[RMDB]
RNA sequence: GGGAACGACUCGAGUAGAGUCGAAAAGUACCCUUGUUCGCAAGGGUACAAAGACAGACUUCACUGUCAUAAUGAAGGUAACAUCUCAGUUACAAUAAGAGAAAAGCACCUACUUCGGUAGGUGCAACACCACUUGGAGGUUCGCCUCCAAGUGGUGAAAAGAAACAACAACAACAAC
Reactivity to 2A3 in 0.01 (KOAc 150mM, MgCl2 10mM, bicine 150mM(pH8.5), 24C), signal-to-noise 2, nucleotides 027 to 126: g000u010a000c000c000c000u000u000g030u000u080c230g050c100a000a020g020g000g000u000a000c000a010a000a000g030a010c000a000g050a030c040u110u030c120a030c050u020g010u010c020a050u190a090a140u140g150a040a020g100g000u020a000a000c000a120u050c070u010c180a050g000u030u010a000c030a100a110u210a160a020g200a010g080a040a090a000a030g020c000a000c000c010u000a000c000u030u070c150g030g000u000a000g010g000u000g000c000a000a000
Reactivity to DMS in 0.01 (KOAc 150mM, MgCl2 10mM, bicine 150mM(pH8.5), 24C), signal-to-noise 1, nucleotides 027 to 126: g040u000a010c010c000c000u040u000g010u000u010c180g020c000a000a010g000g010g040u010a010c000a010a000a060g000a040c070a040g000a130c110u000u000c130a110c040u000g010u010c040a080u000a060a110u000g010a120a060g000g030u000a040a000c010a120u000c070u010c080a040g030u000u000a010c050a090a080u010a110a080g010a250g000a080a070a050a120g000c000a000c000c000u000a010c000u000u000c110g000g000u000a000g000g010u010g000c010a010a010